[RMDB]
RNA sequence: GGGAACGACUCGAGUAGAGUCGAAAAUGGUACGUACCUAACGCAUUUAUGGACGACGGUGAUAAUGAAGGUCACAUUUCUGUCAAUAAUGUCUGUCAUAUGUAUCUCGCAUUCUUUGAUGUGGAUAUAUCAUCUCAUCUGUUUAAAUUAGUUAUUAGAAGUGAUGUAAGUUCGCUUACAUCACUUCAAAAGAAACAACAACAACAAC
Reactivity to DMS in 0.01 (KOAc 150mM, MgCl2 10mM, bicine 150mM(pH8.5), 24C), signal-to-noise 2, nucleotides 027 to 156: u000g040g030u000a060c070g020u000a090c100c020u000a070a080c080g000c030a040u010u000u000a040u020g020g000a070c020g020a080c130g030g050u000g040a060u000a040a130u040g030a100a180g050g000u010c060a030c050a130u000u000u000c040u060g030u000c030a050a100u010a040a030u000g020u010c040u010g020u000c080a090u010a040u010g000u000a020u000c000u000c090g030c050a100u000u000c090u000u010u030g010a020u010g030u000g020g010a060u000a120u010a060u000c060a030u000c000u010c020a080u000c040u010g000u000u000u000a100a110a110u010u000a130g020u000u000a090u010u010a300
Reactivity to 2A3 in 0.01 (KOAc 150mM, MgCl2 10mM, bicine 150mM(pH8.5), 24C), signal-to-noise 3, nucleotides 027 to 156: u110g000g030u070a040c030g010u030a080c040c040u070a100a030c050g030c050a060u060u080u080a080u140g080g020a000c010g000a010c070g070g000u020g030a010u020a190a110u140g130a080a000g080g000u070c000a000c000a050u020u070u010c100u110g050u030c020a050a070u070a090a030u120g040u050c090u070g070u060c020a010u010a040u070g020u020a020u000c130u090c060g010c020a060u050u030c110u200u130u300g010a010u020g000u070g000g030a000u010a020u010a020u070c020a060u020c000u010c040a140u000c050u020g070u050u100u090a040a100a050u060u070a040g040u100u100a000u120u150a020
This 207-nucleotide RNA was probed chemically with DMS and 2A3. 2A3 adducts were read by reverse transcription with SuperScript II with manganese. The reactions ran in a buffer of 150 mM KOAc, 10 mM MgCl2 and 150 mM bicine (pH 8.5), at 24 C. It was measured as part of the RMDB library OK3TST. For DMS the reverse transcriptase was MarathonRT.